[RMDB]
RNA sequence: GGGAACGACUCGAGUAGAGUCGAAAAGGCGGCGUGGUGCUGUCCAUCCCCCGUCAGGUCGGCAAGACGUAUUUGGUCGCGCUGAUCGUGUUCUGCCUCUGCCUGCUAAACCCGGGCUUGACUGUUCUCUGGACCGCGCAUCGAAUGAAGACUGCAGGCUUAAAAGGUUCUUCGGAACCUUUUAAGCAAAAGAAACAACAACAACAAC
Reactivity to DMS in 0.01 (KOAc 150mM, MgCl2 10mM, bicine 150mM(pH8.5), 24C), signal-to-noise 1, nucleotides 027 to 156: g020g010c020g060g030c060g050u000g030g000u010g030c010u000g000u010c040c000a240u000c030c010c020c010c000g000u020c020a060g030g020u010c060g020g040c020a060a110g010a070c030g030u010a100u000u000u010g060g040u010c030g000c240g030c070u010g020a040u000c010g020u000g000u010u010c030u020g010c010c020u010c000u000g000c020c010u010g080c010u000a060a110a090c020c070c030g040g010g060c030u000u000g000a070c070u000g020u010u000c070u000c000u000g050g000a060c000c020g010c080g020c070a130u000c030g040a080a110u010g020a060a130g010a120c040u010g010c040a110g020
Reactivity to 2A3 in 0.01 (KOAc 150mM, MgCl2 10mM, bicine 150mM(pH8.5), 24C), signal-to-noise 1, nucleotides 027 to 156: g010g020c030g020g020c050g050u140g040g080u190g170c070u070g030u070c060c000a070u140c010c020c000c000c030g090u000c100a020g020g000u020c030g010g000c050a040a050g000a000c020g040u090a180u130u090u240g100g000u000c030g000c000g000c050u010g000a030u010c000g000u000g020u070u050c100u030g030c000c020u040c000u060g010c020c000u080g040c010u050a000a050a070c100c030c000g000g020g020c000u010u060g000a030c020u030g100u130u040c080u000c070u040g030g000a030c020c020g000c000g000c020a030u070c010g020a080a090u110g000a030a060g050a040c010u060g020c060a040g000